This 177-nucleotide RNA was probed chemically with 2A3 and DMS. For 2A3 the reverse transcriptase was SuperScript II with manganese. The RNA was probed in 150 mM KOAc, 10 mM MgCl2 and 150 mM bicine (pH 8.5) at 24 C. It was measured as part of the RMDB library OK1LIB. For DMS the reverse transcriptase was MarathonRT. For DMS, 3,067 sequencing reads were counted.
[RMDB]
RNA sequence: GGGAACGACUCGAGUAGAGUCGAAAAGAGGACGGACUACUGGCUGUCUGCAGAGGCUGUAUCCGGUCUGCAAACACGACAGGGCUGGAAUGUCACCUGGAGUGCCGGAGUAGGACGUCCGAAGAGAGGGAUGGAUCUGGUUCGCCAGGUCCAUCCCAAAAGAAACAACAACAACAAC
Reactivity to 2A3 in 0.01 (KOAc 150mM, MgCl2 10mM, bicine 150mM(pH8.5), 24C), signal-to-noise 4, nucleotides 027 to 126: g210a040g020g010a000c000g010g000a000c010u010a000c000u020g100g000c010u030g040u160c010u020g030c000a020g030a040g090g010c040u060g080u130a160u040c010c000g010g020u000c020u030g000c020a020a180a090c090a030c120g210a090c030a090g010g010g060c030u050g000g090a140a090u130g020u050c040a040c130c000u020g020g060a020g000u030g000c010c000g050g040a050g000u000a010g000g000a000c000g010u000c000c000g010a010a000g050a020g020a010
Reactivity to DMS in 0.01 (KOAc 150mM, MgCl2 10mM, bicine 150mM(pH8.5), 24C), signal-to-noise 2, nucleotides 027 to 126: g040a220g000g010a010c000g000g000a070c000u010a040c000u000g030g000c000u030g000u010c060u030g000c110a060g020a120g000g000c020u000g010u010a100u010c030c000g000g010u020c040u000g010c110a100a110a290c200a060c170g000a140c050a070g040g030g000c030u030g020g010a070a130u010g010u060c060a120c060c000u000g000g000a050g010u030g000c050c010g000g010a060g010u020a000g000g000a090c000g000u010c000c000g020a030a070g020a090g020a290